Chemical mapping of a 177-nucleotide RNA with DMS and 2A3.
It was measured as part of the RMDB library OK2TRN.
The reactions ran in a buffer of 150 mM KOAc, 10 mM MgCl2 and 150 mM bicine (pH 8.5), at 24 C.
For DMS the reverse transcriptase was MarathonRT.
Reactivities are given for positions 27 through 126.
The DMS profile rests on 6,326 reads.
RNA sequence: GGGAACGACUCGAGUAGAGUCGAAAACAGUGUGCCCCGGGGUCCAGCAGCAACGGUGUCCCAGGAGCUGUGGGAAGUGCAGAGUCUCAGGCCCACCUGGCCCUGCUGGGACGGAGACUGCAUUUAACACAUGAGCAUCAUUCGUGAUGCUCAUGUGAAAAGAAACAACAACAACAAC
Reactivity to DMS in 0.01 (KOAc 150mM, MgCl2 10mM, bicine 150mM(pH8.5), 24C), signal-to-noise 5, nucleotides 027 to 126: c100a100g010u000g020u010g000c030c030c020c030g000g000g000g000u000c050c050a100g010c020a040g000c140a060a110c120g010g020u010g010u000c020c010c010a120g010g010a120g000c050u000g010u010g000g010g000a140a060g020u010g020c040a090g010a120g010u000c020u010c020a090g010g000c030c020c040a050c060c220u010g020g000c060c060c010u000g010c090u000g000g000g000a040c030g010g000a100g010a120c010u000g010c040a100u000u000u000a090a220
Reactivity to 2A3 in 0.01 (KOAc 150mM, MgCl2 10mM, bicine 150mM(pH8.5), 24C), signal-to-noise 2, nucleotides 027 to 126: c030a030g100u060g020u090g190c010c010c020c030g000g010g030g010u040c040c010a000g010c000a010g000c020a060a050c060g090g000u120g030u070c020c010c000a010g000g040a020g010c040u070g030u030g070g010g020a070a040g030u070g070c070a070g050a050g300u020c010u000c020a020g200g000c000c000c000a010c000c010u060g070g000c000c020c020u050g050c010u020g010g000g000a020c010g010g000a040g010a020c020u030g000c040a070u120u130u110a110a020